An RNA of 207 nucleotides, treated with DMS and read out base by base.
It was measured as part of the RMDB library RNAMAK.
Reactivities are given for positions 27 through 156.
[RMDB]
RNA sequence: GGGAACGACUCGAGUAGAGUCGAAAACGCUGGGUAACGGAUUCGUAGCGGUGGACAAAUUCCAACAGCAUACUGAAGCGCGCACGGUAUGACAUGGAAUUGUCCACCGCUACGACCGUUACCUGUGCUGAAGCGCGCACGGCAACCGAAAGGUGCGGUUAGAACUUAUGUUCGCAUAAGUUCUAACAAAAGAAACAACAACAACAAC
Reactivity to DMS in 0.01 (KOAc 150mM, MgCl2 10mM, bicine 150mM(pH8.5), 24C), signal-to-noise 2, nucleotides 027 to 156: c080g000c010u000g000g040g030u000a010a020c020g020g020a180u000u000c000g040u000a020g040c010g020g060u000g000g000a020c020a050a080a100u000u000c000c000a030a110c060a120g020c000a020u000a010c000u000g010a050a080g010c020g030c040g000c040a300c030g020g010u000a020u000g010a030c060a300u000g000g010a050a030u010u010g010u010c000c000a010c000c000g020c000u000a000c000g010a010c010c010g040u010u000a000c000c000u000g000u020g000c030u000g000a130a090g020c060g020c040g010c030a200c030g000g020c030a100a240c050c030g000a070a150a150g000g020u000g020c030g000